[RMDB]
RNA sequence: GGGAACGACUCGAGUAGAGUCGAAAAGAAACAACUGAAGCUUCAACGCCUUUUUUUCCAAUCUUCUUUAGCACCGGGCUAGGGAGUAAGCCCGUGGAACCUUAGUUUUGUUCCCUCGGGACUUACUUGUGGUUCCUGUGGUGCACUCCUGACCCUGACACAGUAUGGUGUUCGCACCAUACUGUGUAAAAGAAACAACAACAACAAC
Reactivity to 2A3 in 0.01 (KOAc 150mM, MgCl2 10mM, bicine 150mM(pH8.5), 24C), signal-to-noise 3, nucleotides 027 to 156: g040a020a060a010c060a010a020c080u190g090a120a000g020c030u220u250c120a100a070c080g000c000c040u060u050u090u020u010u050u100c070c040a100a200u060c090u170u010c010u080u180u080a120g050c070a050c120c050g040g000g000c030u040a030g080g000g000a000g010u070a050a010g000c000c000c000g010u030g000g000a000a000c000c000u040u000a040g020u080u110u100u110g090u160u070c010c020c010u050c090g060g000g010a020c000u000u010a000c010u040u030g080u100g090g010u000u030c030c000u040g130u200g040g010u070g010c070a030c010u040c000c010u020g050a050c010c000c000u010g010